[RMDB]
RNA sequence: GGGAACGACUCGAGUAGAGUCGAAAACCCGAAGUUCGCUUCGGGAAAAAGGGGUCCACCAUCGAUCGUGCGCGAGGAUCUAUACUGAAGCCUCCACGGUAUAGGGAGCCACGGGAGGUGGACGGAGGCACCCAAAAAAUGCUUGUUCGCAAGCAAAGACGUAGAGUUCGUUCGCGAACUCUACGUCAAAAGAAACAACAACAACAAC
Reactivity to 2A3 in 0.01 (KOAc 150mM, MgCl2 10mM, bicine 150mM(pH8.5), 24C), signal-to-noise 1, nucleotides 027 to 156: c040c000c000g000a020a000g010u130u270c260g020c150u000u040c000g000g030g110a030a000a000a000a060g000g040g010g000u000c000c000a010c010c000a070u100c040g140a130u120c020g000u040g000c270g000c000g080a300g050g000a000u000c000u000a000u000a000c000u010g050a160a050g050c000c000u000c020c010a010c040g010g010u000a000u000a000g000g000g010a010g000c010c000a010c010g000g000g000a010g000g000u010g010g040a020c020g010g000a010g000g010c000a070c000c000c000a070a140a000a000a000a080u170g010c020u030u000g010u140u170c220g010c090a000a010g000c020a010a110a000